[RMDB]
RNA sequence: GGGAACGACUCGAGUAGAGUCGAAAAUCACAAAGCGGAUUUAGCUCGGUUGGGAGAGGUCCAGACCGAAGAUCUGGUUGUCCUGUGGUCGAAACACAGAAUUCGCACCAUAAACAACGGGAGAUUCACCUCCGAUUAUGUUCGCAUAAUCGGAGGUAAAAGAAACAACAACAACAAC
Reactivity to 2A3 in 0.01 (KOAc 150mM, MgCl2 10mM, bicine 150mM(pH8.5), 24C), signal-to-noise 4, nucleotides 027 to 126: u090c010a010c070a070a130a000g090c030g040g030a070u080u090u120a050g050c000u000c010g080g030u030u030g040g020g000a170g030a080g020g120u010c010c010a020g070a030c020c030g030a060a020g040a040u010c000u040g120g000u000u020g010u060c020c100u080g000u010g040g000u000c000g030a010a050a000c200a010c050a200g120a110a090u020u020c010g000c010a010c000c000a000u030a010a070a000c020a000a010c020g060g060g010a040g020a010u090u060c040
Reactivity to DMS in 0.01 (KOAc 150mM, MgCl2 10mM, bicine 150mM(pH8.5), 24C), signal-to-noise 4, nucleotides 027 to 126: u000c040a110c140a110a090a200g010c110g000g010a040u010u000u010a060g040c040u000c040g010g030u000u000g000g000g020a070g000a060g020g000u010c030c050a070g000a080c060c030g000a050a040g000a130u010c010u010g010g020u000u000g000u000c120c080u030g010u000g010g000u010c010g000a000a020a100c150a100c300a230g010a080a090u010u000c010g000c210a020c000c010a020u010a060a140a030c040a020a040c020g010g000g000a050g000a110u010u000c050
Chemical mapping of a 177-nucleotide RNA with 2A3 and DMS. The RNA was probed in 150 mM KOAc, 10 mM MgCl2 and 150 mM bicine (pH 8.5) at 24 C. For DMS the reverse transcriptase was MarathonRT. For 2A3, 3,439 sequencing reads were counted.